[RMDB]
RNA sequence: GGGAACGACUCGAGUAGAGUCGAAAAGGUAACCAAGUCAAGGAGAAGGAACGGUAGAAAAGAGCGAGCCUCUCGAUACGAAAGGGCCGCGAGCCUAUCGAGUUUGGAGUCAUCCGGGCCGAAGGGUCGAAUGCUAAAACUUCGGUUUUAGCAUUCGAAAAGAAACAACAACAACAAC
Reactivity to DMS in 0.01 (KOAc 150mM, MgCl2 10mM, bicine 150mM(pH8.5), 24C), signal-to-noise 2, nucleotides 027 to 126: g020g000u020a090a160c040c070a070a110g030u000c060a050a100g010g010a060g020a070a060g010g010a050a070c080g010g000u000a040g000a080a050a060a080g030a180g000c040g000a090g030c040c000u000c030u000c040g000a190u000a070c080g010a030a090a100g000g000g030c010c000g010c060g000a130g000c070c000u000a050u000c000g000a080g030u000u000u000g020g020a070g000u010c150a060u000c040c030g000g010g010c020c010g020a070a180g000g000g000u010
Reactivity to 2A3 in 0.01 (KOAc 150mM, MgCl2 10mM, bicine 150mM(pH8.5), 24C), signal-to-noise 1, nucleotides 027 to 126: g030g020u020a020a030c020c010a010a000g040u000c010a020a100g040g010a050g070a090a060g000g010a040a060c010g040g010u080a020g080a050a110a050a050g110a000g030c000g000a010g050c020c000u050c020u000c010g030a060u090a140c020g050a060a000a080g040g000g000c010c020g000c030g000a040g050c000c000u100a130u040c020g000a020g050u040u130u070g040g000a040g000u060c030a060u000c010c030g000g010g000c020c010g060a020a030g040g000g020u010